[RMDB]
RNA sequence: GGGAACGACUCGAGUAGAGUCGAAAAAGCCAUCGAGUGCCGCCAAUUCCACUCCGAUAUUGGCCUACCACCAGCAACAGCAUCAGCAGCCGGGCAAUGGCAUUUGCGAGUUCCAGGUGGUGGCACCACGCACUAGCGGUUUCGACCGCUAGUGCGUAAAAGAAACAACAACAACAAC
Reactivity to 2A3 in 0.01 (KOAc 150mM, MgCl2 10mM, bicine 150mM(pH8.5), 24C), signal-to-noise 2, nucleotides 027 to 126: a000g040c030c010a030u110c090g020a040g060u040g030c020c040g000c060c010a010a070u090u030c070c040a060c090u080c030c000g010a050u000a050u190u110g030g040c010c000u150a060c020c000a030c000c000a000g030c070a020a030c000a040g010c010a040u040c010a080g130c000a000g000c010c000g080g040g000c090a050a130u180g050g000c070a070u050u000u000g000c040g090a130g010u030u050c030c020a040g040g000u010g010g000u000g000g000c000a010c000c030
Reactivity to DMS in 0.01 (KOAc 150mM, MgCl2 10mM, bicine 150mM(pH8.5), 24C), signal-to-noise 1, nucleotides 027 to 126: a090g080c000c010a040u000c110g010a170g010u000g000c000c010g000c000c000a120a000u000u000c120c000a100c140u030c050c040g000a000u060a050u000u000g000g000c020c050u010a000c110c000a020c050c000a050g130c300a180a040c130a120g000c030a080u020c010a130g050c060a190g000c020c020g020g020g000c230a080a140u050g040g020c000a050u060u000u000g000c000g000a020g030u000u000c100c010a000g000g000u000g050g000u050g000g000c000a220c040c170